[RMDB]
RNA sequence: GGGAACGACUCGAGUAGAGUCGAAAACGCUACGAGCUGCCAAUGAUGUAUCACCACCGUAUCUCAUUAUUCUCCACUAAAUGUGUUAGUAAUGUGAUCUGUUAACAUAAAAAAAGUUUGACUUCACGCUUAUUACCCACUUCGGUGGGUAAUAAGCAAAAGAAACAACAACAACAAC
Reactivity to DMS in 0.01 (KOAc 150mM, MgCl2 10mM, bicine 150mM(pH8.5), 24C), signal-to-noise 1, nucleotides 027 to 126: c100g010c120u010a000c080g030a100g000c020u000g000c030c020a080a050u020g040a060u000g020u070a100u000c030a090c020c030a030c040c070g040u030a030u010c040u010c040a000u000u050a030u030u000c030u000c030c000a090c140u020a060a040a080u010g010u000g020u000u000a020g020u130a000a020u040g010u010g000a000u020c100u000g000u000u000a010a090c090a020u070a010a000a070a020a130a030a040g010u000u000u010g010a090c010u000u000c040a060c200
Reactivity to 2A3 in 0.01 (KOAc 150mM, MgCl2 10mM, bicine 150mM(pH8.5), 24C), signal-to-noise 3, nucleotides 027 to 126: c030g020c010u070a010c030g040a050g010c000u010g070c010c000a050a050u100g000a030u110g040u060a080u040c000a020c040c000a010c050c070g030u130a070u010c020u000c000a000u000u050a030u070u010c080u080c060c010a070c030u170a110a160a120u250g040u000g010u030u060a000g000u000a000a000u070g040u040g050a070u020c020u000g020u060u040a080a030c080a120u300a100a120a000a000a000a000a030g030u010u030u090g110a160c000u020u000c030a000c060